[RMDB]
RNA sequence: GGGAACGACUCGAGUAGAGUCGAAAAGCUAAUCGGCAUAUUAAUGCGCUAUAAUCGCGGCAUGCAUAUUAAUUACGCGAUUAGCGCUAGCAUGCGCCGAUCGAUCGUACGUAUAUAGCGCUAUAGCCUGAUCAGAGUAUUUCGAUACUCUGAUCAGAAAAGAAACAACAACAACAAC
Reactivity to DMS in 0.01 (KOAc 150mM, MgCl2 10mM, bicine 150mM(pH8.5), 24C), signal-to-noise 9, nucleotides 027 to 126: g000c040u000a070a050u000c030g000g010c010a060u000a050u000u010a100a120u010g010c010g010c010u000a070u010a060a060u000c040g010c020g010g010c210a060u000g020c200a110u010a130u010u010a090a100u010u000a050c020g000c000g010a030u000u000a020g010c000g020c010u000a070g020c290a040u010g000c090g010c040c010g000a010u000c050g010a090u000c110g010u000a080c100g010u010a070u000a060u000a040g000c020g000c090u000a100u000a100g010c120
Reactivity to 2A3 in 0.01 (KOAc 150mM, MgCl2 10mM, bicine 150mM(pH8.5), 24C), signal-to-noise 9, nucleotides 027 to 126: g030c040u050a050a010u050c010g000g010c020a020u030a050u260u090a100a080u150g010c000g000c020u050a040u090a190a040u040c020g000c010g030g020c070a030u100g030c050a070u180a070u270u270a220a090u130u070a030c010g000c000g010a000u000u010a000g000c010g000c000u010a010g010c030a020u060g020c010g000c030c000g000a010u030c020g020a040u100c030g040u110a100c030g050u010a060u010a020u030a230g030c010g000c080u070a070u090a150g040c000